[RMDB]
RNA sequence: GGGAACGACUCGAGUAGAGUCGAAAAUCUAGUCUAUUCGUAGACUAGAAAAGACUGCUGCCGGCAGGGUUGACUGCGCCGAGCAGAAACGGCAAAGGAAAUAAACUCUUGCUUUCGAGCAAGAGAAAUCUAUAAUCUUCUUCGGAAGAUUAUAGAUAAAAGAAACAACAACAACAAC
Reactivity to 2A3 in 0.01 (KOAc 150mM, MgCl2 10mM, bicine 150mM(pH8.5), 24C), signal-to-noise 1, nucleotides 027 to 126: u000c000u010a020g000u000c000u020a030u050u030c080g110u050a000g010a010c000u000a000g010a000a040a020a030g020a000c020u050g010c000u020g050c040c000g030g000c000a000g140g020g010u250u270g080a140c050u060g000c110g000c030c030g040a040g010c000a010g000a120a080a010c050g040g000c080a090a020a060g120g090a070a090a050u110a070a100a090c000u000c010u010u010g010c000u060u040u090c260g080a010g030c010a010a000g000a000g000a000a020
Reactivity to DMS in 0.01 (KOAc 150mM, MgCl2 10mM, bicine 150mM(pH8.5), 24C), signal-to-noise 3, nucleotides 027 to 126: u010c000u000a000g000u010c000u000a010u010u010c140g010u000a000g000a000c010u000a000g000a020a110a130a140g010a160c030u000g010c050u010g010c040c010g030g010c020a300g010g000g020u020u010g020a240c030u000g010c140g010c030c060g000a140g000c040a040g010a030a080a080c080g000g010c080a030a100a070g000g000a040a070a080u000a090a070a140c000u000c000u000u010g000c000u000u000u010c130g000a010g010c000a000a010g000a010g000a000a050